[RMDB]
The record gives the reactivity of an RNA of 177 nucleotides to 2A3 and DMS. The RNA was probed in 150 mM KOAc, 10 mM MgCl2 and 150 mM bicine (pH 8.5) at 24 C. For DMS the reverse transcriptase was MarathonRT.
RNA sequence: GGGAACGACUCGAGUAGAGUCGAAAAUCAAGCCGUUUCGACGGCUUGAACACUUUUGAGUCCUGAGGGACUACGAUCCAGAGUACGGGAGGAACUCUAAGGCCUAGCCCUGCUUCGGCAGGGCUAACAACGUUAACCACUUCGGUGGUUAACGUUGAAAAGAAACAACAACAACAAC
Reactivity to 2A3 in 0.01 (KOAc 150mM, MgCl2 10mM, bicine 150mM(pH8.5), 24C), signal-to-noise 1, nucleotides 027 to 126: u010c010a020a000g000c010c010g030u030u010u120c160g090a000c020g030g030c000u010u000g020a000a000c060a050c010u130u060u090u210g030a030g010u030c010c020u070g070a150g060g090g010a000c020u090a080c150g090a160u070c000c020a020g010a040g110u070a060c010g020g030g030a030g010g050a040a030c000u000c000u020a050a050g080g000c000c010u010a010g000c000c000c010u000g000c000u030u060c180g110g010c000a000g000g030g000c010u000a030a000
Reactivity to DMS in 0.01 (KOAc 150mM, MgCl2 10mM, bicine 150mM(pH8.5), 24C), signal-to-noise 2, nucleotides 027 to 126: u000c020a000a000g000c000c000g000u000u000u010c190g020a040c000g030g030c000u020u000g000a030a080c190a090c060u010u000u010u020g010a010g010u000c000c000u000g020a270g020g000g010a050c040u010a060c110g000a090u000c100c050a120g010a080g000u010a090c070g000g000g020a080g000g010a110a040c030u000c000u010a060a060g000g010c030c060u000a020g010c010c000c000u000g000c000u010u010c170g000g010c010a000g000g000g020c000u010a010a060